Chemical mapping of a 177-nucleotide RNA with DMS and 2A3. For 2A3 the reverse transcriptase was SuperScript II with manganese. The reactions ran in a buffer of 150 mM KOAc, 10 mM MgCl2 and 150 mM bicine (pH 8.5), at 24 C. Values cover nucleotides 27 to 126.

RNA sequence: GGGAACGACUCGAGUAGAGUCGAAAAUUUAAGUUGGAUUUCACCUUCCUCUGGUGUCUCCUUGAUUAGCUUAAUAAUCAACCUUCUUAAUUCUUUUUCUGGCAAUUCAGAUUUCAUCUUGGUUUAGUAUGUGCUUUAAGUUCGCUUAAAGCACAUAAAAAGAAACAACAACAACAAC
Reactivity to DMS in 0.01 (KOAc 150mM, MgCl2 10mM, bicine 150mM(pH8.5), 24C), signal-to-noise 3, nucleotides 027 to 126: u000u010u010a030a060g010u000u010g010g010a170u010u010u000c030a040c020c020u000u000c090c070u010c120u000g010g020u010g010u010c110u010c090c110u000u000g000a040u000u000a030g020c190u010u010a090a080u000a030a040u000c030a050a120c050c030u000u000c030u000u000a040a060u000u000c050u000u010u000u000u010c030u000g010g000c110a080a090u010u000c050a030g010a050u010u000u010c070a060u000c070u010u000g000g000u000u000u000a100g000
Reactivity to 2A3 in 0.01 (KOAc 150mM, MgCl2 10mM, bicine 150mM(pH8.5), 24C), signal-to-noise 2, nucleotides 027 to 126: u050u070u040a030a010g020u010u070g050g000a120u080u070u070c010a020c000c000u050u050c060c050u110c120u040g010g040u020g030u020c030u000c040c000u020u060g040a060u040u080a000g030c070u150u140a130a030u030a050a010u230c000a000a080c010c000u010u040c000u040u050a090a130u130u020c030u080u120u050u090u020c030u060g050g020c050a020a150u180u080c010a010g050a120u050u140u060c040a100u010c060u050u070g080g010u080u080u030a050g040